RNA sequence: GGGAACGACUCGAGUAGAGUCGAAAACUAGGGUUCGCCCUAGAAAAGUAAGAAAUCUUUGUAGUUUUCCGCGAGUCAACGUGAAAACUGAAGAGAUUUUUUACAGAAAGUCCAACUUCGGUUGGACCAUAUACCGAUCCUUCGGGAUCGGUAUAUGAAAAGAAACAACAACAACAAC
Reactivity to 2A3 in 0.01 (KOAc 150mM, MgCl2 10mM, bicine 150mM(pH8.5), 24C), signal-to-noise 2, nucleotides 027 to 126: c000u010a000g020g000g030u040u060c180g130c000c000c000u000a010g010a020a140a010a020g010u000a000a010g000a020a000a010u000c000u020u050u080g150u130a020g010u020u010u000u000c050c040g010c010g040a030g170u120c040a090a070c030g080u120g090a000a010a000a000c010u000g010a070a010g000a010g000a010u020u010u000u000u000u000a010c010a000g100a100a070a010g000u000c010c000a000a000c000u070u070c210g060g000u000u000g000g000a000c010
Reactivity to DMS in 0.01 (KOAc 150mM, MgCl2 10mM, bicine 150mM(pH8.5), 24C), signal-to-noise 2, nucleotides 027 to 126: c010u000a000g000g000g040u010u030c220g020c000c000c010u000a010g000a060a080a110a210g010u000a000a000g000a010a000a010u000c010u000u000u000g000u000a030g000u000u000u000u000c010c030g020c050g000a230g010u010c210a120a050c010g000u010g000a030a000a010a010c000u000g000a070a050g000a020g010a000u000u010u000u010u010u000a000c010a160g020a110a100a130g000u000c000c000a000a010c000u000u010c210g020g010u000u000g000g000a010c010
Structure probing data (2A3 and DMS) for a 177-nucleotide construct. The data come from the RNA Mapping Database (RMDB), library RFMREP. The 2A3 profile rests on 1,725 reads. The DMS profile rests on 2,177 reads. Conditions: 150 mM KOAc, 10 mM MgCl2 and 150 mM bicine (pH 8.5), 24 C.